[RMDB]
RNA sequence: GGGAACGACUCGAGUAGAGUCGAAAAGAUAUGGACGUAACAUCAUACUACCCACCUCCAGUGCUCGGAAACGAGCACGGAGAGGUAUGUGGUCCUAAGUCAAAACACAAGUGUUCGCACUUGUGAACUUUUAAACCAAGUUCGCUUGGUUUAAAAGAAAAGAAACAACAACAACAAC
Reactivity to DMS in 0.01 (KOAc 150mM, MgCl2 10mM, bicine 150mM(pH8.5), 24C), signal-to-noise 9, nucleotides 027 to 126: g010a090u000a210u000g000g010a020c020g010u000a070a150c190a070u000c020a030u010a020c040u000a080c020c020c060a300c120c000u000c000c000a140g040u000g000c000u000c000g020g010a070a060a170c010g010a010g020c000a000c010g000g000a020g010a040g000g000u000a000u000g010u000g010g000u000c000c010u000a080a110g010u000c090a080a070a110a190c010a000c000a010a010g010u000g010u010u010c200g020c010a000c000u000u000g010u000g000a040a070
Reactivity to 2A3 in 0.01 (KOAc 150mM, MgCl2 10mM, bicine 150mM(pH8.5), 24C), signal-to-noise 6, nucleotides 027 to 126: g070a080u170a130u230g020g010a020c070g100u210a160a090c110a140u220c010a010u040a060c010u150a160c030c000c030a070c040c000u000c000c020a120g010u000g010c000u000c000g020g020a030a100a070c010g000a000g000c000a000c000g000g000a000g000a000g000g000u010a020u030g030u050g080g000u020c010c000u040a110a020g130u090c080a050a080a160a130c010a010c010a000a020g000u000g060u120u150c300g080c150a000c000u000u000g010u000g010a010a010